[RMDB]
RNA sequence: GGGAACGACUCGAGUAGAGUCGAAAAGGCGUUAAACCACCAUGAAUCAUACCAACUUUAAUACCAGCUUCAUUUAGUGAACGUGCUAAAUCAUUUGCAUUAUCUCUACUAUUACAGAAAAUAAUACAUUACGUUUGAGUUUCGACUCAAACGUAAUAAAAGAAACAACAACAACAAC
Reactivity to DMS in 0.01 (KOAc 150mM, MgCl2 10mM, bicine 150mM(pH8.5), 24C), signal-to-noise 2, nucleotides 027 to 126: g020g000c030g000u000u000a050a110a120c040c000a090c020c020a050u010g000a110a050u000c040a090u000a070c060c010a080a160c100u010u010u010a040a080u000a100c040c040a050g020c060u000u000c120a050u010u010u000a030g010u000g010a090a100c260g030u000g000c030u000a030a070a050u020c100a110u010u000u010g000c030a030u000u030a140u000c020u000c040u000a120c100u000a070u000u010a050c070a100g000a060a050a050a080u010a060a080u000a070c090
Reactivity to 2A3 in 0.01 (KOAc 150mM, MgCl2 10mM, bicine 150mM(pH8.5), 24C), signal-to-noise 3, nucleotides 027 to 126: g040g000c050g010u030u050a090a050a050c020c010a010c010c010a040u060g020a020a040u080c020a000u020a060c020c000a020a100c050u070u130u150a150a040u090a160c040c010a010g050c030u060u060c060a090u030u040u160a040g010u030g090a110a070c030g020u000g070c020u080a070a060a070u150c060a170u020u030u090g010c010a020u010u030a110u070c060u000c010u090a100c030u080a090u190u060a030c010a030g190a050a100a020a060u140a030a040u130a100c020